[RMDB]
RNA sequence: GGGAACGACUCGAGUAGAGUCGAAAAAUAGUAAUGAAGAGAGUUCUUACACCUAUCGCUAUCGUACAUACAGCUACGAAAUACGUAACCGGUGCUGUAACAUUCUGAUUUAAGAAGCCAUAGCAAUACUUCUGGUCUCGGAUUAGGCGUCGUUACGCAACGCCGAAAUGUUCGCAUUUCGGCGUUGAAAAGAAACAACAACAACAAC
Reactivity to 2A3 in 0.01 (KOAc 150mM, MgCl2 10mM, bicine 150mM(pH8.5), 24C), signal-to-noise 3, nucleotides 027 to 156: a000u130a020g020u060a040a080u190g080a110a040g090a020g020a040g100u070u000c010u030u040a040c040a040c020c010u060a090u110c070g040c110u060a050u070c030g010u030a020c030a020u150a020c030a060g000c060u010a000c010g070a000a040a130u130a030c020g010u010a010a010c100c080g040g000u010g000c000u010g020u040a060a020c010a050u050u000c010u020g050a070u040u040u220a090a020g010a010a000g070c090c040a140u130a050g050c090a100a110u060a120c030u000u000c010u050g050g010u010c020u000c090g000g010a040u040u040a070g020g000c010g010u010c000g000u000u000a000c010g000
Reactivity to DMS in 0.01 (KOAc 150mM, MgCl2 10mM, bicine 150mM(pH8.5), 24C), signal-to-noise 2, nucleotides 027 to 156: a070u020a150g020u000a070a120u000g020a130a090g000a110g020a100g010u000u000c040u020u020a070c040a070c020c020u000a140u000c030g010c020u100a300u010c000g000u020a050c040a100u000a140c170a280g020c010u000a020c050g000a040a070a140u000a040c020g010u000a050a040c070c070g020g020u000g020c010u000g000u020a060a030c090a160u000u000c010u000g000a050u000u000u010a100a010g020a000a030g000c020c060a060u000a110g050c160a140a080u000a160c000u000u000c020u000g040g010u000c010u000c000g020g000a150u000u000a050g030g010c030g010u000c050g000u000u000a050c030g020

Structure probing data (2A3 and DMS) for a 207-nucleotide construct. The reactions ran in a buffer of 150 mM KOAc, 10 mM MgCl2 and 150 mM bicine (pH 8.5), at 24 C. Values cover nucleotides 27 to 156. For DMS the reverse transcriptase was MarathonRT. The DMS profile rests on 2,990 reads.